Record summary: Chemical mapping of a 177-nucleotide RNA with 2A3 and DMS. For DMS, 4,347 sequencing reads were counted. For 2A3, 4,451 sequencing reads were counted. For DMS the reverse transcriptase was MarathonRT.

RNA sequence: GGGAACGACUCGAGUAGAGUCGAAAAUAUUAGGCAGCACUUGGCCAACCACCCCGCCGCGACCCAUACCAAAGCCGUCGCCUUGGGCACCGAAGAAACACAGACGACUAUCCAGCGACCAAGAUCAAUCCACUCAUACAUUCGUGUAUGAGUGGAUAAAAGAAACAACAACAACAAC
Reactivity to 2A3 in 0.01 (KOAc 150mM, MgCl2 10mM, bicine 150mM(pH8.5), 24C), signal-to-noise 4, nucleotides 027 to 126: u260a030u100u170a050g030g000c020a020g020c010a050c130u080u090g060g000c010c010a010a010c030c000a020c010c000c000c010g020c010c020g020c010g020a020c000c010c030a040u090a120c030c040a070a040a040g010c020c010g030u060c020g000c000c040u050u080g030g040g010c010a000c000c040g020a070a030g070a080a120a000c070a000c000a030g050a080c030g000a020c040u020a050u070c030c010a010g000c010g040a030c020c020a060a020g050a150u100c050a040
Reactivity to DMS in 0.01 (KOAc 150mM, MgCl2 10mM, bicine 150mM(pH8.5), 24C), signal-to-noise 3, nucleotides 027 to 126: u030a100u030u030a010g010g020c080a050g020c070a070c140u000u000g000g020c010c040a050a110c080c030a130c010c000c070c040g010c020c030g000c080g010a080c040c000c040a090u000a140c130c080a020a060a090g010c080c050g030u000c080g030c000c040u000u030g020g000g020c020a060c030c020g040a040a020g010a030a080a070c080a060c100a100g000a070c080g000a060c080u010a070u030c000c040a130g030c020g010a050c080c070a050a060g010a070u020c150a050